RNA sequence: GGGAACGACUCGAGUAGAGUCGAAAAGGGAUCAGUGUUUUCACUGAUCCCCACGUCGCUGUUUUCAGCGACGAUUAUCACGUAUACGACUCGCCGGUAUACGGUAUCUCCUUUGCAUUCCUUCGGGAUUGUUUGGGAGUUACGAUUAUGGCGCAAAACCGGUGCGUAAUUUCGAUUACGCACCGGUAAAAGAAACAACAACAACAAC
Reactivity to 2A3 in 0.01 (KOAc 150mM, MgCl2 10mM, bicine 150mM(pH8.5), 24C), signal-to-noise 1, nucleotides 027 to 156: g000g000g000a000u000c000a000g050u050g040u120u060u220u300c030a000c000u000g000a000u020c000c000c000c000a040c010g010u030c000g010c010u000g080u190u110u200u300c000a000g040c020g000a000c000g000a040u080u110a200u200c130a000c060g000u000a010u010a050c110g070a120c140u080c060g000c000c020g000g010u020a000u000a000c010g000g010u010a010u000c010u000c000c000u030u080u010g000c000a000u000u010c010c000u030u070c240g070g000g000a010u010u000g000u020u020u020g000g010g000a000g000u000u000a000c000g000a010u000u090a100u300g000g010c030g010c020a000a020a000
The record gives the reactivity of an RNA of 207 nucleotides to 2A3. Conditions: 150 mM KOAc, 10 mM MgCl2 and 150 mM bicine (pH 8.5), 24 C.